[RMDB]
RNA sequence: GGGAACGACUCGAGUAGAGUCGAAAACGGCAUCAGUGAUUUAGUGAUGGAGCCAAGAGUCAUGAGCAGGCUCCAUUGCCCCAGGAUGCGUACAUGGGCUCGUAGCGACGCAGGAUCAGCUCUGGGUAGUGCUGGUUUUCUUGCUGGUACGCAGCGGCUAUCAAGCAUUAUUCGUAAUGCUUGAUAGAAAAGAAACAACAACAACAAC
Reactivity to 2A3 in 0.01 (KOAc 150mM, MgCl2 10mM, bicine 150mM(pH8.5), 24C), signal-to-noise 9, nucleotides 027 to 156: c030g080g000c010a020u020c020a050g130u060g180a160u130u160u300a040g000u020g020a000u010g000g010a000g000c010c010a110a060g150a040g160u170c140a160u280g060a050g080c110a050g020g000c000u000c000c000a000u000u000g000c000c010c000c000a020g110g030a040u020g020c010g000u040a040c040a140u110g040g100g000c020u020c050g050u060a040g080c040g110a120c080g000c020a010g010g010a030u030c010a000g020c030u010c030u130g270g070g110u270a080g030u030g020c000u000g010g060u030u040u050u050c020u020u080g010c020u050g050g030u020a020c020g000c030a010g000c000g020g010
Reactivity to DMS in 0.01 (KOAc 150mM, MgCl2 10mM, bicine 150mM(pH8.5), 24C), signal-to-noise 4, nucleotides 027 to 156: c050g020g000c020a030u000c020a130g000u010g010a170u000u010u000a070g020u010g010a040u010g010g000a050g020c010c020a070a170g010a160g020u000c090a100u000g010a210g060c040a220g010g010c010u000c000c020a020u000u000g010c010c020c070c040a170g010g010a060u000g010c010g030u000a050c080a110u000g010g020g020c020u000c040g010u000a110g020c010g010a100c030g010c040a080g000g010a090u000c030a050g010c010u000c020u000g030g010g010u010a060g000u010g010c000u000g010g000u000u000u010u000c040u000u000g020c010u000g010g000u000a030c050g010c040a060g010c030g000g010